[RMDB]
RNA sequence: GGGAACGACUCGAGUAGAGUCGAAAAGAGGAAGGAGCUCUCGAACGCCCCCCCGACCCUCGGAUGGGCCGCUUCCGGCAGGGAAGCCCGAAGGUGGGAGAGGGGGAGAACACUUCGAGAGUUGGGGCAUCGAGAUGUAGUUCGCUACAUCUCGAUGAAAAGAAACAACAACAACAAC
Reactivity to DMS in 0.01 (KOAc 150mM, MgCl2 10mM, bicine 150mM(pH8.5), 24C), signal-to-noise 1, nucleotides 027 to 126: g030a050g030g010a130a040g010g010a080g060c000u000c030u000c000g030a030a020c180g000c000c000c000c000c000c000c000g010a300c040c000c000u000c000g030g010a290u040g000g000g000c060c180g000c150u000u000c000c040g020g020c300a200g040g000g000a030a060g020c060c000c010g000a200a150g000g000u000g020g010g010a130g000a200g000g020g000g010g000a050g000a100a060c110a130c220u000u000c000g000a020g010a070g010u030u000g000g000g000g000
Chemical mapping of a 177-nucleotide RNA with DMS. It was measured as part of the RMDB library 15KREP. Reactivities are given for positions 27 through 126. The RNA was probed in 150 mM KOAc, 10 mM MgCl2 and 150 mM bicine (pH 8.5) at 24 C.